[RMDB]
RNA sequence: GGGAACGACUCGAGUAGAGUCGAAAAGCCGAUGAAUUGCCGAGAAGCCUGGCUCGAAUUCGUCGACGCAUCGACGACGGUCCUGCCAUGAGACCGUAACGAGGACAUGUCGCCUCGAAUGGCGUCGUAUAACAUGAGUGGUUCGCCACUCAUGUAAGCCCGUAUUACUAUUCGUAGUAAUACGGGCAAAAGAAACAACAACAACAAC
Reactivity to DMS in 0.01 (KOAc 150mM, MgCl2 10mM, bicine 150mM(pH8.5), 24C), signal-to-noise 2, nucleotides 027 to 156: g010c040c000g040a080u000g010a010a060u000u000g050c190c050g000a080g010a090a160g000c070c100u000g030g000c000u000c010g030a050a060u010u000c020g080u000c020g020a050c040g000c140a220u000c010g020a060c010g000a100c030g010g010u000c010c000u020g020c060c200a100u030g010a110g000a040c000c010g000u000a050a090c030g000a100g030g010a110c040a140u000g030u000c000g000c000c000u000c010g010a110a090u020g010g020c030g000u000c030g040u000a090u000a080a050c010a000u000g020a000g010u000g020g020u010u020c300g030c040c000a020c000u010c000a000u000g000u000a040a210
Reactivity to 2A3 in 0.01 (KOAc 150mM, MgCl2 10mM, bicine 150mM(pH8.5), 24C), signal-to-noise 4, nucleotides 027 to 156: g030c020c010g010a020u050g030a000a080u070u070g060c050c020g030a020g030a120a050g060c060c110u140g080g010c020u010c030g030a050a050u020u010c000g000u000c000g020a030c030g040c080a080u070c020g020a010c000g010a000c000g000g000u000c000c010u050g040c040c010a030u060g020a020g010a100c010c010g010u040a020a020c000g000a000g000g020a010c050a180u200g040u180c120g020c010c010u000c020g020a020a010u040g030g020c000g020u040c030g000u040a080u040a240a020c000a000u000g000a000g010u000g030g010u030u030c050g040c080c000a000c000u000c000a000u000g000u010a010a000
Background: An RNA of 207 nucleotides, treated with DMS and 2A3 and read out base by base. The RNA was probed in 150 mM KOAc, 10 mM MgCl2 and 150 mM bicine (pH 8.5) at 24 C. DMS adducts were read by reverse transcription with MarathonRT. The data come from the RNA Mapping Database (RMDB), library M2RFPK.